Overview
This 177-nucleotide RNA was probed chemically with DMS and 2A3. For 2A3, 4,430 sequencing reads were counted. 2A3 adducts were read by reverse transcription with SuperScript II with manganese. Source: RMDB library OK2TRN, as collected in RNAgym.
RNA sequence: GGGAACGACUCGAGUAGAGUCGAAAACUUGUUGAAAUCAAGGCCAUUCCUGUCUUCAACAAACCAGCUGACAAGCAAGUACCUGCUGAAAUAUUGGAAAUUGCUGCUAAAAUCGAAGAGACAGAUGCCCAUAUCCUGUAUUCGUACAGGAUAUGGGAAAAGAAACAACAACAACAAC
Reactivity to DMS in 0.01 (KOAc 150mM, MgCl2 10mM, bicine 150mM(pH8.5), 24C), signal-to-noise 5, nucleotides 027 to 126: c120u000u010g010u000u010g010a080a080a100u010c120a070a040g010g000c100c130a140u000u000c050c010u000g010u010c020u000u000c020a020a070c050a020a070a160c210c060a050g010c060u000g000a120c110a100a060g010c030a040a050g000u000a160c090c050u000g000c090u000g010a100a080a080u000a090u010u000g000g010a060a050a170u000u000g000c020u000g030c060u010a050a060a070a120u010c060g000a060a080g000a120g000a070c060a080g010a110u000g010
Reactivity to 2A3 in 0.01 (KOAc 150mM, MgCl2 10mM, bicine 150mM(pH8.5), 24C), signal-to-noise 5, nucleotides 027 to 126: c020u010u010g020u050u090g080a060a070a130u160c060a070a040g060g000c040c030a100u100u100c010c010u000g030u030c040u060u030c000a050a050c000a040a060a060c020c030a010g030c020u060g060a050c030a130a000g000c020a030a020g040u040a110c030c020u060g020c030u040g120a080a110a060u230a060u070u130g050g030a060a130a100u070u060g000c020u010g000c050u110a080a040a040a120u100c080g040a070a010g040a020g020a080c010a030g100a090u150g060